[RMDB]
RNA sequence: GGGAACGACUCGAGUAGAGUCGAAAAGGGGUCGACUCGAGGGACUCCGACGAUCUCUGGUCGAGAGCGACUGAAGCCUCCACGGUCGCUCUAAGACAGCCAGAGGGAGGAGUCCGUAGAGUCGACGGAGGCACCCAAAUCCGGGUUCGCCCGGAAACAGUAUAGAUAAGUUCGCUUAUCUAUACUGAAAAGAAACAACAACAACAAC
Reactivity to 2A3 in 0.01 (KOAc 150mM, MgCl2 10mM, bicine 150mM(pH8.5), 24C), signal-to-noise 1, nucleotides 027 to 156: g030g000g010g000u020c000g010a010c010u010c020g010a110g110g010g030a010c010u000c000c000g060a080c000g000a010u020c010u000c000u000g000g010u110c050g030a010g000a000g080c000g000a000c000u020g020a100a040g000c000c020u000c000c000a020c020g010g000u020c000g010c000u030c000u010a020a010g010a030c000a000g010c000c000a000g000a300g000g000g000a000g030g000a010g010u000c000c300g000u080a010g000a020g000u000c000g000a000c000g000g000a030g020g010c000a030c000c000c000a000a080a010u000c000c000g000g010g010u040u080c150g090c030c000c000g000g000a000a000a000
Reactivity to DMS in 0.01 (KOAc 150mM, MgCl2 10mM, bicine 150mM(pH8.5), 24C), signal-to-noise 1, nucleotides 027 to 156: g020g040g020g010u000c010g010a030c000u000c000g010a220g010g000g000a050c010u000c000c030g020a060c080g010a040u000c000u000c000u010g000g050u000c040g000a030g000a040g000c020g000a060c020u020g040a010a120g000c030c030u000c000c030a300c040g010g000u000c010g020c020u000c010u000a030a100g020a140c220a110g020c040c010a050g010a050g000g010g030a090g050g020a090g000u000c010c010g000u000a080g000a030g030u000c000g000a010c020g010g030a010g000g040c020a120c010c010c020a090a140a140u000c010c000g020g010g000u010u010c140g000c020c160c000g000g000a020a070a260